[RMDB]
RNA sequence: GGGAACGACUCGAGUAGAGUCGAAAAUGCACCCGGGUAAGUCCUAUACGGCCAGCUCCCUUCGAAUCCUCCAGGGCUUGAUCGCAGCAAAGGUAGUUGGUUGUAGCGGCGCGAUAUAGUAAGCUUACAUACACAUACCGUUCGCGGUAUGUGUAUGAAAAGAAACAACAACAACAAC
Reactivity to 2A3 in 0.01 (KOAc 150mM, MgCl2 10mM, bicine 150mM(pH8.5), 24C), signal-to-noise 1, nucleotides 027 to 126: u070g030c000a070c000c000c000g070g000g000u040a040a050g100u000c000c010u010a020u020a020c020g000g030c010c000a010g020c020u030c030c000c000u000u000c100g100a130a120u050c030c010u070c060c030a060g000g000g020c000u030u070g000a030u080c040g000c050a030g060c020a050a010a010g010g000u010a010g010u010u020g000g000u030u070g010u050a010g020c010g010g020c020g040c000g070a030u050a010u030a160g150u080a100a030g020c010u000u010a010
Reactivity to DMS in 0.01 (KOAc 150mM, MgCl2 10mM, bicine 150mM(pH8.5), 24C), signal-to-noise 3, nucleotides 027 to 126: u010g010c180a130c010c000c020g020g040g000u000a030a070g010u010c050c010u010a130u020a060c020g020g000c000c000a050g000c020u000c040c010c010u000u000c070g020a190a090u000c020c030u000c070c090a170g000g010g010c040u010u000g010a080u010c150g030c070a090g010c060a070a080a030g000g000u000a050g010u000u000g010g000u010u000g020u010a030g030c080g000g000c020g020c030g000a090u000a080u010a090g000u000a080a070g020c030u000u000a130
Description
An RNA of 177 nucleotides, treated with 2A3 and DMS and read out base by base. The RNA was probed in 150 mM KOAc, 10 mM MgCl2 and 150 mM bicine (pH 8.5) at 24 C. The data come from the RNA Mapping Database (RMDB), library RFMREP. For 2A3 the reverse transcriptase was SuperScript II with manganese.